[RMDB]
RNA sequence: GGGAACGACUCGAGUAGAGUCGAAAACUCGCAUUUGUGGGUUCUCUUAAGCAAAAUACUUGCAUUAGGUCUCAGCUGGGGCUGUGCAUCAGGCGGUUUGAGAAAUAUUCAAUUCUCAGCAGAAGCCGAUAUUUAGACGGUUCGCCGUCUAAAUAUCAAAAGAAACAACAACAACAAC
Reactivity to DMS in 0.01 (KOAc 150mM, MgCl2 10mM, bicine 150mM(pH8.5), 24C), signal-to-noise 2, nucleotides 027 to 126: c000u000c010g050c070a290u020u010u000g050u010g020g010g010u000u000c030u010c000u000u010a050a140g010c040a090a080a060a080u000a080c180u000u000g010c010a090u000u000a070g030g020u010c040u000c030a210g040c170u030g000g010g000g010c010u000g030u000g000c050a060u000c130a060g000g000c000g020g000u000u010u000g010a020g000a010a040a040u000a080u000u000c140a070a090u000u000c000u000c000a020g010c060a110g000a070a140g000c060c040
Reactivity to 2A3 in 0.01 (KOAc 150mM, MgCl2 10mM, bicine 150mM(pH8.5), 24C), signal-to-noise 2, nucleotides 027 to 126: c000u010c010g000c030a140u090u110u300g050u040g000g060g030u080u000c030u000c000u040u170a050a000g020c090a130a080a130a190u200a160c080u000u040g000c000a030u000u270a060g080g000u010c010u030c030a120g020c090u260g040g040g010g010c010u030g000u020g010c020a030u030c020a030g000g050c020g030g000u040u080u100g020a030g040a000a010a000u250a100u050u140c040a020a060u020u000c000u010c010a020g030c010a020g040a240a010g030c050c050
Record summary: Structure probing data (DMS and 2A3) for a 177-nucleotide construct. For DMS the reverse transcriptase was MarathonRT. For DMS, 1,179 sequencing reads were counted. Conditions: 150 mM KOAc, 10 mM MgCl2 and 150 mM bicine (pH 8.5), 24 C. As a SHAPE reagent, 2A3 marks flexible, mostly unpaired nucleotides at the ribose 2'-OH. Source: RMDB library RFMREP, as collected in RNAgym.